[RMDB]
RNA sequence: GGGAACGACUCGAGUAGAGUCGAAAAGAGUAAAUAGAGGAGUCAGGGUUCGCACCCGCUCCGCGAACCUAGGGUAACACUGACUGUGGAGCGUAAGAGAGAGCAGACGAAGAUACGUCUGCAUAGAAGUGAGCUAUGAUUUCGAUCAUAGCUCACUAAAAGAAACAACAACAACAAC
Reactivity to 2A3 in 0.01 (KOAc 150mM, MgCl2 10mM, bicine 150mM(pH8.5), 24C), signal-to-noise 3, nucleotides 027 to 126: g100a010g030u220a040a100a080u210a100g090a080g080g030a060g000u030c070a120g020g000g040u000u000c040g000c000a110c000c050c000g020c010u000c000c000g000c000g000a030a040c010c030u080a070g140g000g130u100a110a020c040a020c100u140g050a030c000u080g080u150g100g020a000g000c040g000u070a180a000g080a000g070a000g020a030g090c000a000g000a000c000g020a110a000g040a200u200a110c010g000u000c000u000g020c010a000u000a000g050a000
Reactivity to DMS in 0.01 (KOAc 150mM, MgCl2 10mM, bicine 150mM(pH8.5), 24C), signal-to-noise 3, nucleotides 027 to 126: g030a090g010u040a030a090a090u000a080g000a100g030g010a030g000u000c060a150g000g000g010u020u000c040g040c090a120c120c060c050g000c040u010c080c040g000c010g000a050a010c040c030u020a120g000g030g000u000a060a080c140a080c060u000g010a070c060u020g010u010g010g000a020g010c030g010u020a100a070g010a190g000a080g000a180g030c000a000g000a030c000g030a150a240g060a150u010a070c010g000u000c000u010g000c020a020u010a040g000a140

Structure probing data (2A3 and DMS) for a 177-nucleotide construct. The reactions ran in a buffer of 150 mM KOAc, 10 mM MgCl2 and 150 mM bicine (pH 8.5), at 24 C. Reactivities are given for positions 27 through 126. The data come from the RNA Mapping Database (RMDB), library OK1LIB. DMS adducts were read by reverse transcription with MarathonRT.